Chemical mapping of a 207-nucleotide RNA with 2A3 and DMS. Reactivities are given for positions 27 through 156.
[RMDB]
RNA sequence: GGGAACGACUCGAGUAGAGUCGAAAAGAAAUCAGAUCACAGAGGCCAUGAGACCCACGUCCAGAGGGCCCUAGGAGGGAGCUGUGGGCUCAGCUGGUUGAUUUACUCUGGCUUGGGUCGCUGCUACUGCUUUGAGGACAAUAAGCUUGGCCAUCAAAUCGGAUAUACUCUUCGGAGUAUAUCCGAUAAAAGAAACAACAACAACAAC
Reactivity to 2A3 in 0.01 (KOAc 150mM, MgCl2 10mM, bicine 150mM(pH8.5), 24C), signal-to-noise 2, nucleotides 027 to 156: g040a030a090a010u130c060a030g090a100u090c040a020c010a130g070a090g050g020c030c000a060u070g030a040g000a110c000c010c000a000c010g030u010c020c000a000g000a010g010g010g000c000c000c000u030a060g040g090a050g030g080g020a010g020c020u050g020u150g100g040g000c020u020c010a020g000c020u040g040g000u060u050g030a090u030u100u140a060c000u010c000u000g000g000c000u000u010g020g010g010u000c000g000c010u040g020c010u030a060c040u050g080c020u060u120u150g080a070g030g060a030c020a130a050u110a130a000g020c010u020u030g000g000c030c000a020u080c030a030a080
Reactivity to DMS in 0.01 (KOAc 150mM, MgCl2 10mM, bicine 150mM(pH8.5), 24C), signal-to-noise 1, nucleotides 027 to 156: g000a030a090a080u010c030a030g010a110u000c030a070c030a140g010a280g000g000c010c050a140u000g010a180g000a020c010c000c050a010c090g000u020c020c000a110g000a070g020g040g010c010c010c040u010a050g020g020a110g000g050g020a080g040c010u000g020u000g000g010g020c000u000c020a110g030c030u000g010g010u020u020g020a160u000u010u000a080c010u000c000u000g010g020c010u000u000g010g030g010u000c010g040c040u000g000c000u000a070c040u000g020c020u000u000u000g010a190g030g000a070c030a100a050u000a080a120g000c110u000u000g000g010c000c010a140u010c030a040a190